[RMDB]
RNA sequence: GGGAACGACUCGAGUAGAGUCGAAAAAAGUUGCUGAUCGCAUUGUCCUGAUGGAAGACGGGCGCAUUCGCACCACCGCCACACCGGCGAAAGUCCGGUCAGGGCAAGCGCCGGAGAUCGGCCGCUUAUACUCAGGGAUAUUCGUAUCCCUGAGUAUAAAAGAAACAACAACAACAAC
Reactivity to 2A3 in 0.01 (KOAc 150mM, MgCl2 10mM, bicine 150mM(pH8.5), 24C), signal-to-noise 9, nucleotides 027 to 126: a000a000g050u040u010g000c020u010g010a020u030c050g010c110a160u000u040g010u020c010c000u020g020a040u090g080g100a080a070g110a080c050g000g030g000c030g000c090a160u140u170c060g000c030a130c020c010a040c030c040g030c030c010a130c030a080c080c080g010g010c010g040a120a030a000g050u030c010c010g020g020u020c020a020g000g010g000c010a010a010g030c030g020c030c020g130g040a130g010a040u040c000g010g010c000c010g000c000u010u020
Reactivity to DMS in 0.01 (KOAc 150mM, MgCl2 10mM, bicine 150mM(pH8.5), 24C), signal-to-noise 4, nucleotides 027 to 126: a030a040g010u010u000g000c000u020g010a040u000c040g000c080a100u010u000g010u010c000c000u000g000a070u010g010g010a070a140g020a170c090g000g000g000c020g010c120a200u030u020c100g000c030a100c060c040a080c110c050g000c040c040a060c180a070c140c080g000g000c000g000a060a060a100g000u010c000c010g020g000u010c050a040g000g010g000c020a020a020g000c040g010c040c120g020g010a160g010a080u010c000g000g010c030c030g000c030u000u010